[RMDB]
RNA sequence: GGGAACGACUCGAGUAGAGUCGAAAACGUUGAGACAAAUCUCCAGAACCAGAUCGCCAUCCAUAACGACGCCAUCGCGGCUCUCAGGAAGGAGGCCCUCAAGAGCCUGAACGAUCUCGAGACGGGCCAUAGGCCUUUCAUUCGUGAAAGGCCUAUGAAAAGAAACAACAACAACAAC
Reactivity to 2A3 in 0.01 (KOAc 150mM, MgCl2 10mM, bicine 150mM(pH8.5), 24C), signal-to-noise 3, nucleotides 027 to 126: c030g050u050u150g040a020g030a070c030a060a150a080u030c030u010c020c010a040g030a100a080c020c010a000g010a110u040c000g020c040c010a050u030c030c010a060u060a140a060c050g050a020c050g030c010c010a060u110c080g030c050g070g000c010u000c010u000c040a030g030g020a050a010g050g060a030g020g020c000c000c000u070c030a040a030g020a010g050c010c000u020g030a040a020c030g050a070u040c010u010c030g040a030g020a020c030g010g000g010c010
Reactivity to DMS in 0.01 (KOAc 150mM, MgCl2 10mM, bicine 150mM(pH8.5), 24C), signal-to-noise 7, nucleotides 027 to 126: c100g010u000u000g010a110g010a120c070a050a110a100u000c030u000c030c040a080g010a140a100c060c050a090g000a070u000c070g010c030c020a070u000c040c050a060u000a060a110c120g010a060c140g020c040c050a060u000c110g010c090g020g000c020u000c030u000c110a050g010g010a080a070g010g010a160g010g010c030c010c020u000c080a050a190g000a070g000c040c010u000g010a070a100c110g000a090u000c010u000c040g000a110g000a090c070g000g000g010c050
Conditions: 150 mM KOAc, 10 mM MgCl2 and 150 mM bicine (pH 8.5), 24 C. This 177-nucleotide RNA was probed chemically with 2A3 and DMS. It was measured as part of the RMDB library OK2TST. The DMS profile rests on 8,094 reads. The 2A3 profile rests on 4,740 reads.